[RMDB]
RNA sequence: GGGAACGACUCGAGUAGAGUCGAAAAGAUAUGGAAUGCCUACCCACCAUCCGAAAUAGAAUGCCGAUGAAACUUCUCGGAAACGAGAAGUGGAGGCACUAUUUCGGAUGAGGGCAUUCCUAAGUCACAUAAUAUUUCCGUUCGCGGAAAUAUUAUGAAAAGAAACAACAACAACAAC
Reactivity to 2A3 in 0.01 (KOAc 150mM, MgCl2 10mM, bicine 150mM(pH8.5), 24C), signal-to-noise 4, nucleotides 027 to 126: g050a080u300a290u300g000g010a020a010u000g000c010c080u210a300c150c020c010a020c010c000a010u000c000c010g030a000a000a020u040a030g250a300a300u110g010c020c050g300a300u020g000a040a000a010c010u010u000c000u010c000g030g000a100a050a050c000g000a010g010a010a010g000u010g000g000a010g000g020c000a010c000u000a000u000u010u000c000g000g000a010u000g000a010g000g000g010c010a000u000u020c000c000u000a020a020g170u100c100a010
Reactivity to DMS in 0.01 (KOAc 150mM, MgCl2 10mM, bicine 150mM(pH8.5), 24C), signal-to-noise 5, nucleotides 027 to 126: g010a190u010a200u000g000g000a020a000u000g000c000c000u010a190c030c010c040a300c100c000a000u000c000c000g000a000a010a000u000a000g020a170a150u000g000c000c000g020a160u010g000a110a090a010c000u000u000c000u000c000g000g000a050a120a190c010g000a010g010a020a020g020u000g000g010a030g020g030c010a030c000u000a010u000u000u000c010g010g000a000u000g000a020g010g010g000c000a000u000u000c000c010u000a030a090g000u030c170a160